[RMDB]
RNA sequence: GGGAACGACUCGAGUAGAGUCGAAAAGCAUCGACGACGGUCCUGCCAUGGGACCGUAACGAGGACAUGUCGCCUCGAAUGGCGUCGGGGAGCCGGCAGCUUACCCCAAGGAUGAGCGCCUAAUGCCUAUACCCGAUUCGCUUCGGCGAAUCGGGAAGGUGUUAAAUAGAUUCGUCUAUUUAACACCAAAAGAAACAACAACAACAAC
Reactivity to DMS in 0.01 (KOAc 150mM, MgCl2 10mM, bicine 150mM(pH8.5), 24C), signal-to-noise 1, nucleotides 027 to 156: g020c050a080u000c020g030a070c030g030a050c040g040g030u010c000c000u000g000c010c300a130u000g000g000g000a030c010c000g030u020a040a040c030g000a150g010g020a190c080a090u000g020u020c020g020c000c010u000c000g000a110a070u000g020g010c030g030u000c030g010g020g040g000a110g000c020c000g000g030c060a140g040c020u000u000a090c030c000c000c030a050a140g010g010a070u010g020a090g060c050g030c030c030u010a070a020u000g020c020c000u000a170u000a110c000c000c000g000a050u000u000c000g010c000u000u030c300g030g000c030g010a020a010u000c000g030g020g000a000a010
Reactivity to 2A3 in 0.01 (KOAc 150mM, MgCl2 10mM, bicine 150mM(pH8.5), 24C), signal-to-noise 6, nucleotides 027 to 156: g040c010a080u120c030g070a050c020g010a000c010g010g000u000c010c000u060g220c190c100a300u300g000g000g000a010c000c000g000u000a000a010c000g000a010g000g030a020c050a100u220g030u100c080g000c010c000u010c010g020a070a130u150g030g000c020g020u020c020g020g000g000g000a010g050c060c040g060g000c030a030g010c020u050u180a250c000c000c010c020a020a050g060g030a080u120g040a030g040c020g010c000c020u080a120a040u120g020c010c000u080a090u090a140c000c000c000g000a000u000u000c000g000c010u030u020c130g060g000c000g000a000a000u000c000g000g000g000a000a010